[RMDB]
RNA sequence: GGGAACGACUCGAGUAGAGUCGAAAACGGCGUCGGCCAUCGCCACGGCGUCUCCCACGUCGACCUUGACCCGGUCGAUGCCGGAUCGGUAAAAACCGGUGGCGCCCUUGCCGAUGCUGACCAAGGCGUCCUAUCGUAUAUUCGUAUACGAUAGGACAAAAGAAACAACAACAACAAC
Reactivity to DMS in 0.01 (KOAc 150mM, MgCl2 10mM, bicine 150mM(pH8.5), 24C), signal-to-noise 8, nucleotides 027 to 126: c070g000g000c000g030u000c010g010g010c020c300a110u010c070g000c030c040a060c100g000g010c010g010u000c160u000c020c010c040a190c090g010u000c010g020a020c020c010u000u000g000a100c180c170c260g010g000u000c010g010a020u000g020c040c300g000g000a050u010c070g010g000u010a080a070a060a110a110c040c030g000g010u010g000g000c010g000c110c090c080u000u010g010c010c000g010a030u000g000c010u000g000a200c030c030a130a120g010g020c160
Reactivity to 2A3 in 0.01 (KOAc 150mM, MgCl2 10mM, bicine 150mM(pH8.5), 24C), signal-to-noise 9, nucleotides 027 to 126: c010g010g000c010g000u010c010g010g010c020c030a140u150c040g010c010c010a010c010g030g030c010g040u010c060u030c070c000c000a010c020g000u000c000g000a020c000c020u040u120g120a110c040c020c020g010g000u000c010g010a010u030g050c040c030g030g030a120u140c040g030g070u150a110a120a040a050a090c020c020g070g030u020g010g000c000g000c030c040c000u020u040g000c000c000g000a010u010g000c010u020g020a010c020c010a050a050g150g020c070